An RNA of 207 nucleotides, treated with 2A3 and read out base by base.
The 2A3 profile rests on 439 reads.
Values cover nucleotides 27 to 156.
RNA sequence: GGGAACGACUCGAGUAGAGUCGAAAAGAGCGAUUAGACAAAGGGGUAGAGCUACAUAUUAGAUAGCUGUAUAAUCGUUCAAGUUACAUCAAAACAUCUUCAAUAUUUAUUACUUAAUUUCCUUUCUGCCAGAGUACGGUAUUCGUACCGUACUCAAGGUUUUCCCGUAUUUCGAUACGGGAAAACCAAAAGAAACAACAACAACAAC
Reactivity to 2A3 in 0.01 (KOAc 150mM, MgCl2 10mM, bicine 150mM(pH8.5), 24C), signal-to-noise 1, nucleotides 027 to 156: g010a000g000c010g000a010u000u010a050g000a040c030a050a130a160g100g000g000g000u100a080g020a000g010c000u010a000c020a040u280a120u260u160a090g060a260u020a000g010c000u010g020u070a050u000a040a000u000c000g030u010u000c000a010a010g030u080u100a020c050a080u090c080a050a090a030a020c000a080u060c050u250u080c020a070a190u070a120u090u250u180a150u180u080a040c000u070u130a100a030u130u000u030c020c000u000u050u120c020u100g050c050c050a020g000a000g000u000a000c000g010g000u030a050u000u020c160g000u000a000c000c000g000u010a030c020u010c000a000a000